[RMDB]
RNA sequence: GGGAACGACUCGAGUAGAGUCGAAAAUCACAUUAAAAUGUUUCCAAUUAGCUCAAAAAUGUCCUUUAUGGCUGGUUUGGCUAAAACAGUAUCCAGGCCAGCAUUGCACCUAUGAAAUUGGCUGUUAGGAAUCUUGUAUCUUUAAAAAUCAAGGGCAGAGUGAGUAUUAGUUCGCUAAUACUCACUCAAAAGAAACAACAACAACAAC
Reactivity to DMS in 0.01 (KOAc 150mM, MgCl2 10mM, bicine 150mM(pH8.5), 24C), signal-to-noise 1, nucleotides 027 to 156: u010c070a090c100a250u010u000a050a070a300a240u010g010u020u010u000c010c010a010a140u000u000a130g010c060u040c070a010a060a050a120a100u000g010u010c010c010u010u000u000a120u010g020g070c020u000g020g020u010u000u000g030g000c120u010a030a040a110a180c150a110g020u010a100u010c000c000a040g020g000c000c000a030g050c010a030u010u000g000c080a070c020c020u010a080u000g010a020a040a110u000u000g040g010c000u010g000u010u010a090g010g000a060a120u000c010u000u000g000u010a050u010c070u000u000u000a080a110a080a080a020u000c040a040a030g000g080g010c040a060
Reactivity to 2A3 in 0.01 (KOAc 150mM, MgCl2 10mM, bicine 150mM(pH8.5), 24C), signal-to-noise 3, nucleotides 027 to 156: u110c020a030c040a060u180u250a080a080a050a100u140g010u020u060u010c020c000a030a050u140u080a110g020c060u100c150a030a050a020a030a110u080g000u050c010c000u130u130u050a060u190g110g000c000u000g000g020u020u000u010g000g000c010u020a000a050a130a110c070a030g060u060a050u020c010c000a000g000g000c000c000a000g000c020a010u000u070g010c020a080c010c030u110a130u160g120a110a150a070u100u060g040g000c020u020g030u040u020a050g010g040a040a050u050c020u050u090g050u070a080u030c020u010u210u160a110a140a040a010a020u080c050a020a030g020g030g000c000a000
Structure probing data (DMS and 2A3) for a 207-nucleotide construct.
For DMS, 1,931 sequencing reads were counted.
The RNA was probed in 150 mM KOAc, 10 mM MgCl2 and 150 mM bicine (pH 8.5) at 24 C.